[RMDB]
RNA sequence: GGGAACGACUCGAGUAGAGUCGAAAAAAGAGGUGGAAAUAUUGUUGGCGAACAUGAUGCUCUAUUUGCUGGAGACAAUGAGGUUCUUACAAUAAGCCAUCAAGCUCAAUCUCGUGGUAUCUUUGCAGCGCAUGGCGUGAUUCGUCACGCCAUGCGCAAAAGAAACAACAACAACAAC
Reactivity to 2A3 in 0.01 (KOAc 150mM, MgCl2 10mM, bicine 150mM(pH8.5), 24C), signal-to-noise 1, nucleotides 027 to 126: a000a000g130a150g080g000u000g000g000a150a240a000u060a060u020u000g000u020u020g110g040c150g070a070a000c010a000u070g040a190u110g070c000u000c000u020a140u100u100u280g230c280u150g050g000a060g050a000c070a080a140u060g000a130g000g000u240u050c000u000u060a000c090a000a000u040a050a000g020c090c000a000u040c020a010a010g040c000u000c000a000a270u050c000u000c040g000u000g010g000u040a200u110c000u000u000u010g080c130a000

Chemical mapping of a 177-nucleotide RNA with 2A3. The RNA was probed in 150 mM KOAc, 10 mM MgCl2 and 150 mM bicine (pH 8.5) at 24 C. The data come from the RNA Mapping Database (RMDB), library OK1LIB. 2A3 adducts were read by reverse transcription with SuperScript II with manganese. Reactivities are given for positions 27 through 126.